[RMDB]
The data come from the RNA Mapping Database (RMDB), library OK3TST. Chemical mapping of a 207-nucleotide RNA with DMS and 2A3. DMS adducts were read by reverse transcription with MarathonRT. Reactivities are given for positions 27 through 156. The reactions ran in a buffer of 150 mM KOAc, 10 mM MgCl2 and 150 mM bicine (pH 8.5), at 24 C.
RNA sequence: GGGAACGACUCGAGUAGAGUCGAAAAAGACCACAAGCGACAUUUGUAUGAUAAAUACUAUGUUCGAACUGAAUUAGAACAUGACCGUGAUAUCCCUGAUGAAACGGACAGGGAACUGCUUAGAAGAAGCGUCGCAAUGACCUUCUAUAUUGAAAGGAUAAUAAAGUCUGUUCGCAGACUUUAUUAUAAAAGAAACAACAACAACAAC
Reactivity to DMS in 0.01 (KOAc 150mM, MgCl2 10mM, bicine 150mM(pH8.5), 24C), signal-to-noise 3, nucleotides 027 to 156: a100g000a200c050c000a070c060a110a150g030c020g020a060c030a300u000u000u000g010u040a070u000g000a200u010a080a100a050u000a060c010u010a040u000g010u010u010c060g000a080a300c050u020g020a060a240u000u010a140g000a050a060c020a120u010g010a030c040c060g020u010g020a200u010a070u000c000c000c000u000g010a040u000g000a020a040a120c030g000g000a140c020a070g030g000g020a050a070c100u000g020c020u000u010a080g010a040a070g000a030a020g000c160g050u000c000g040c100a170a100u000g010a010c020c000u000u010c000u000a100u000a090u010u010g010a040a060a110g030g010
Reactivity to 2A3 in 0.01 (KOAc 150mM, MgCl2 10mM, bicine 150mM(pH8.5), 24C), signal-to-noise 3, nucleotides 027 to 156: a000g070a040c050c020a050c020a040a050g040c010g030a000c010a040u230u300u120g040u060a020u030g040a060u120a200a150a020u040a040c020u020a020u030g080u100u110c020g010a040a020c030u060g030a100a040u110u140a140g040a090a020c050a080u090g040a060c030c020g090u040g070a050u050a090u170c040c000c000u020g030a030u050g020a090a080a080c060g060g030a000c010a000g010g000g010a010a000c050u120g040c040u110u130a040g020a100a000g030a000a010g120c060g060u000c000g010c130a060a190u260g010a000c000c010u000u030c010u030a060u020a020u100u050g020a130a050a040g080g020